RNA sequence: GGGAACGACUCGAGUAGAGUCGAAAAAUUGGUAGAAAAAUUAUCAACAAAAUACUAGCAAACUGAAUUUAGCAAUUCAUUAAAAAGAUCAUUCAUCAUGACUAAGUGGUAUUUAUCCCAGGGAUGCAAGAAUGGUUCAACGUAUGCAAAUCAGUCAAUCCGAUAUGGCAUUCGUGCCAUAUCGGAUAAAAGAAACAACAACAACAAC
Reactivity to 2A3 in 0.01 (KOAc 150mM, MgCl2 10mM, bicine 150mM(pH8.5), 24C), signal-to-noise 1, nucleotides 027 to 156: a010u080u030g000g000u030a010g090a030a180a020a090a000u110u020a010u020c010a010a140c030a060a270a000a050u060a030c030u040a010g050c080a110a000a000c010u010g010a030a060u010u010u010a080g010c000a000a070u050u020c010a030u040u300a160a010a010a000a000g060a060u020c000a000u060u060c010a100u040c040a020u030g060a060c020u060a090a080g030u070g050g040u140a140u070u120u000a010u030c000c000c000a000g030g040g000a010u030g000c040a010a110g100a010a000u170g000g050u050u060c060a050a040c080g020u000a000u000g000c010a030a300a030u030c150a020g270u300c010a040

The data come from the RNA Mapping Database (RMDB), library OK3TST. Structure probing data (2A3) for a 207-nucleotide construct. The 2A3 profile rests on 429 reads. For 2A3 the reverse transcriptase was SuperScript II with manganese.